[RMDB]
RNA sequence: GGGAACGACUCGAGUAGAGUCGAAAAGAUAUGGAGUAUCACUCGCGAUAAGCUGGUGUCGGAAACGACAUACAGCUUUUGACGCGAAAUACUCCUAAGUCAAAAGUGACCUGUUCGCAGGUCACAAGAUCCAAAGAAAGUUCGCUUUCUUUGGAUCAAAAGAAACAACAACAACAAC
Reactivity to DMS in 0.01 (KOAc 150mM, MgCl2 10mM, bicine 150mM(pH8.5), 24C), signal-to-noise 7, nucleotides 027 to 126: g000a030u000a250u010g000g010a030g010u000a000u000c120a160c220u000c000g020c000g020a140u010a010a010g020c000u000g000g030u000g000u000c000g010g000a050a030a070c000g020a010c010a010u000a110c000a010g010c000u000u000u000u000g020a220c080g000c000g000a020a080a010u000a010c000u000c000c000u000a010a050g000u010c010a110a100a140a140g010u000g000a010c000c000u000g010u000u010c240g030c010a000g020g000u000c000a000c010a060a080